[RMDB]
RNA sequence: GGGAACGACUCGAGUAGAGUCGAAAAGAUAUGGAGAAGGCCAGUCGAGCAUUAUCUCGGAAACGAGAUUAUGCGAAGACAGCUGGAACUACCUUCUCCUAAGUCAAAGAGCGGGUUCGCCCGCUCAGAGAAUACGCUUCUUCGGAAGCGUAUUCUCAAAAGAAACAACAACAACAAC
Reactivity to DMS in 0.01 (KOAc 150mM, MgCl2 10mM, bicine 150mM(pH8.5), 24C), signal-to-noise 2, nucleotides 027 to 126: g020a040u000a300u000g000g000a020g050a000a020g140g010c000c020a000g010u000c000g010a300g000c010a010u020u000a000u000c000u000c020g010g000a060a090a300c010g000a000g000a010u000u000a010u000g000c020g000a080a180g010a050c300a040g000c020u000g000g010a100a020c090u010a300c000c050u000u020c000u000c000c010u000a000a040g020u000c020a010a150a130g000a020g020c000g000g000g000u010u010c300g020c000c000c000g010c030u000c000a010
Reactivity to 2A3 in 0.01 (KOAc 150mM, MgCl2 10mM, bicine 150mM(pH8.5), 24C), signal-to-noise 1, nucleotides 027 to 126: g000a000u080a060u140g000g010a000g010a020a000g040g070c010c010a000g050u070c050g050a030g000c000a010u030u010a000u070c000u020c000g020g000a110a060a030c010g000a010g000a000u050u070a000u000g010c030g080a120a030g070a040c010a010g020c010u020g000g000a020a090c100u180a080c180c000u010u020c000u070c010c000u010a070a020g050u060c060a140a080a060g000a000g030c030g040g000g070u070u120c300g130c020c000c000g010c020u040c030a000